[RMDB]
Chemical mapping of a 207-nucleotide RNA with 2A3 and DMS. For DMS, 4,602 sequencing reads were counted. Conditions: 150 mM KOAc, 10 mM MgCl2 and 150 mM bicine (pH 8.5), 24 C. For DMS the reverse transcriptase was MarathonRT.
RNA sequence: GGGAACGACUCGAGUAGAGUCGAAAAGCUCAACAUCACGAAUCAUCAGGGAAAUGCAAAUUAAAACCACAAUGAGAUACCACCUUACUCCUGCAAGAAUGGCCUUUUAGAUGUUGGCAUGGAUGUGGGGAAAAGAGAACACUUAUACCUGCUGGUGCAGCAGUUACUAGUUCGCUAGUAACUGCUGAAAAGAAACAACAACAACAAC
Reactivity to 2A3 in 0.01 (KOAc 150mM, MgCl2 10mM, bicine 150mM(pH8.5), 24C), signal-to-noise 6, nucleotides 027 to 156: g030c030u030c060a020a030c010a080u070c020a020c110g090a070a060u070c020a020u020c040a070g020g020g060a050a070a040u100g040c040a060a070a110u110u150a110a110a060a050c040c030a050c060a080a110u140g010a010g010a080u080a090c010c040a020c040c000u030u060a050c020u020c020c000u040g020c040a060a030g060a120a090u110g080g000c010c000u100u160u050u110a060g020a060u060g020u080u020g030g010c040a040u080g040g020a030u040g000u050g020g010g000g020a010a090a020a040g090a000g030a050a010c020a010c050u100u060a050u090a130c030c010u040g030c030u040g000g060u140g020
Reactivity to DMS in 0.01 (KOAc 150mM, MgCl2 10mM, bicine 150mM(pH8.5), 24C), signal-to-noise 3, nucleotides 027 to 156: g020c020u020c010a080a100c020a030u000c040a120c050g010a160a130u000c020a110u000c020a130g020g040g030a050a090a040u000g020c050a040a050a170u010u000a050a050a110a100c030c030a060c050a040a100u010g000a070g010a160u000a060c010c010a060c040c030u010u000a070c020u000c050c060u020g000c050a070a120g000a040a090u000g000g000c020c000u030u000u000u000a080g000a040u000g010u000u010g010g030c030a100u000g020g000a040u020g030u010g020g000g040g000a050a060a030a110g000a150g010a060a080c030a040c070u000u000a120u000a100c040c010u010g000c030u010g010g020u000g020